Notes: Structure probing data (2A3 and DMS) for a 177-nucleotide construct. The 2A3 profile rests on 1,369 reads. 2A3 is a SHAPE reagent: it acylates the 2'-hydroxyl of flexible nucleotides of all four kinds.
RNA sequence: GGGAACGACUCGAGUAGAGUCGAAAAGGCACUGCCACCAAUAGAAGUGAUGACGGGGCGCAAGGGGAAGGCAUGACGACGCAAGGCACUGUAACUGAGCUUCACCUGCGACACAGUGCUGCGACAGCGCAUACGGUCCGUUCGCGGACCGUAUGCGAAAAGAAACAACAACAACAAC
Reactivity to 2A3 in 0.01 (KOAc 150mM, MgCl2 10mM, bicine 150mM(pH8.5), 24C), signal-to-noise 2, nucleotides 027 to 126: g020g030c040a000c140u110g010c000c010a030c000c000a050a060u120a080g210a240a080g040u040g070a110u110g020a010c030g000g020g000g010c000g030c090a080a050g010g000g020g020a110a040g000g030c010a060u060g040a030c040g010a010c030g030c010a030a100g110g000c000a000c040u030g030u070a000a040c060u050g040a000g050c000u090u040c020a130c050c030u100g020c060g050a010c000a000c000a080g030u030g010c050u020g000c000g000a030c030a020g020
Reactivity to DMS in 0.01 (KOAc 150mM, MgCl2 10mM, bicine 150mM(pH8.5), 24C), signal-to-noise 2, nucleotides 027 to 126: g000g020c050a080c020u020g000c000c010a140c040c060a030a190u000a050g020a100a050g000u000g000a060u000g010a070c170g020g000g000g040c060g020c060a110a080g030g030g000g020a140a060g000g000c130a060u000g000a070c050g010a070c050g000c060a040a190g000g000c020a020c020u000g000u000a070a090c150u030g000a100g020c050u000u020c180a070c110c050u000g000c000g010a100c240a030c050a050g000u010g010c000u000g020c080g000a100c130a080g010